Structure probing data (DMS and 2A3) for a 207-nucleotide construct. Values cover nucleotides 27 to 156. For DMS the reverse transcriptase was MarathonRT. The data come from the RNA Mapping Database (RMDB), library RNAMAK. The 2A3 profile rests on 6,673 reads. For DMS, 8,646 sequencing reads were counted. Conditions: 150 mM KOAc, 10 mM MgCl2 and 150 mM bicine (pH 8.5), 24 C.

[RMDB]
RNA sequence: GGGAACGACUCGAGUAGAGUCGAAAAUGUGAUUCGUCACAAGAUACACCUUUGUGUCCGAAGCGAUAUUGUCAGAAACACCGUUCCCAUUGGGAACGGAAAUUUCUUGGAUUUAUAUCGCUAAGGACACUCUGGUUUGAUAGGCCUUCGGGCCUAAAUUGGAUUCAAGAUUCGUCUUGAAUCCAAUAAAAGAAACAACAACAACAAC
Reactivity to DMS in 0.01 (KOAc 150mM, MgCl2 10mM, bicine 150mM(pH8.5), 24C), signal-to-noise 4, nucleotides 027 to 156: u000g000u000g000a060u000u010c220g040u020c020a090c010a070a140g000a240u000a110c120a090c030c000u000u000u010g000u010g020u000c000c000g010a300a080g010c000g000a030u000a020u000u000g010u030c020a080g000a030a030a030c040a290c000c010g000u000u000c010c010c020a300u000u020g060g040g000a030a010c010g020g000a010a010a100u000u000u010c000u000u020g020g000a060u000u000u000a010u000a010u000c000g010c000u020a020a300g000g000a040c000a010c000u000c010u000g020g010u000u000u010g010a150u000a040g010g010c000c000u000u010c300g070g030g010c010c000u000a000a000
Reactivity to 2A3 in 0.01 (KOAc 150mM, MgCl2 10mM, bicine 150mM(pH8.5), 24C), signal-to-noise 6, nucleotides 027 to 156: u090g010u010g020a030u060u120c240g040u010c090a000c010a030a030g080a090u230a060c070a020c020c010u020u010u010g000u000g000u000c010c000g010a040a010g000c000g000a000u000a000u010u030g000u000c010a000g010a010a000a010c080a040c040c010g010u010u000c000c010c030a060u140u300g010g000g010a000a000c000g000g010a050a040a020u010u000u000c020u040u150g130g000a020u100u300u030a010u040a000u000c000g000c000u000a000a000g000g000a000c000a000c000u000c000u000g000g030u030u020u070g080a070u050a030g000g000c010c000u040u120c290g070g010g000c010c000u010a020a020